RNA sequence: GGGAACGACUCGAGUAGAGUCGAAAAGUGAGUCAUCUCAGAGUGAAGGCUGAGCCAAGGUCAGGUCAGCAGUGAUUUGCUGAAGUUAGUCUCUGUCUGUGCAGCCCAGAUGGUAAGAUCCUUAAAGCGCCCUUAGUGUAUUCGUACACUAAGGGCGAAAAGAAACAACAACAACAAC
Reactivity to DMS in 0.01 (KOAc 150mM, MgCl2 10mM, bicine 150mM(pH8.5), 24C), signal-to-noise 2, nucleotides 027 to 126: g030u010g010a140g010u010c030a050u000c020u000c040a100g000a110g030u000g000a100a100g020g000c030u010g000a140g010c090c050a080a110g000g000u000c060a070g000g000u000c030a020g000c040a040g020u000g000a090u000u020u010g020c010u000g000a040a080g000u000u000a060g010u000c020u010c030u000g020u000c020u000g030u020g020c070a040g010c030c020c060a080g010a090u000g000g000u010a050a090g000a120u000c010c030u000u020a070a090a120g010
Reactivity to 2A3 in 0.01 (KOAc 150mM, MgCl2 10mM, bicine 150mM(pH8.5), 24C), signal-to-noise 2, nucleotides 027 to 126: g070u040g020a020g060u040c020a080u010c040u020c030a040g060a010g100u070g140a090a040g050g000c010u040g020a010g010c030c040a040a020g000g050u070c020a020g000g070u020c020a000g050c010a000g040u060g180a160u180u050u170g000c030u030g030a040a060g060u090u190a020g020u060c010u010c000u070g000u050c010u040g070u090g050c040a010g000c020c010c000a060g000a080u060g080g010u040a060a040g010a200u120c000c040u020u160a150a050a020g080